[RMDB]
RNA sequence: GGGAACGACUCGAGUAGAGUCGAAAAAAUUUUGUCUGAUCUUGAGGAAAAGGGGAAGCGUUAAAAACAGUUAUCAAUAUAGAAUGUAUAAAUUGUAUGUAAAUCAACAUUUUGUUUGUGUUUUGGAUUAUUAGAACGUAUUCGUACGUUCUAAUAAAAAAGAAACAACAACAACAAC
Reactivity to 2A3 in 0.01 (KOAc 150mM, MgCl2 10mM, bicine 150mM(pH8.5), 24C), signal-to-noise 7, nucleotides 027 to 126: a000a000u150u110u040u080g070u010c020u020g030a090u030c030u050u080g020a050g020g000a030a060a020a070g020g010g010g020a030a020g010c040g030u080u110a060a070a010a020a000c020a000g000u040u040a060u150c030a070a020u120a030u050a200g090a110a040u100g010u060a080u060a140a100a060u110u050g020u050a090u060g040u050a060a050a090u140c040a020a060c010a050u050u070u020u120g070u030u040u100g010u010g010u000u020u000u000g000g010a020
Reactivity to DMS in 0.01 (KOAc 150mM, MgCl2 10mM, bicine 150mM(pH8.5), 24C), signal-to-noise 4, nucleotides 027 to 126: a070a080u010u010u000u010g000u000c050u000g010a090u010c050u000u000g010a090g000g000a020a010a050a090g010g010g010g000a110a070g010c070g000u010u010a060a020a050a080a040c040a040g000u000u000a060u010c020a040a040u020a090u020a090g010a050a020u010g000u000a080u020a050a040a040u020u010g000u010a050u020g000u020a050a040a060u030c070a030a030c050a050u000u000u000u000g000u010u000u010g020u000g000u000u010u000u010g010g010a260

Source: RMDB libraries RFM100 and RFMREP, as collected in RNAgym. This 177-nucleotide RNA was probed chemically with 2A3 and DMS. DMS adducts were read by reverse transcription with MarathonRT. The RNA was probed in 150 mM KOAc, 10 mM MgCl2 and 150 mM bicine (pH 8.5) at 24 C.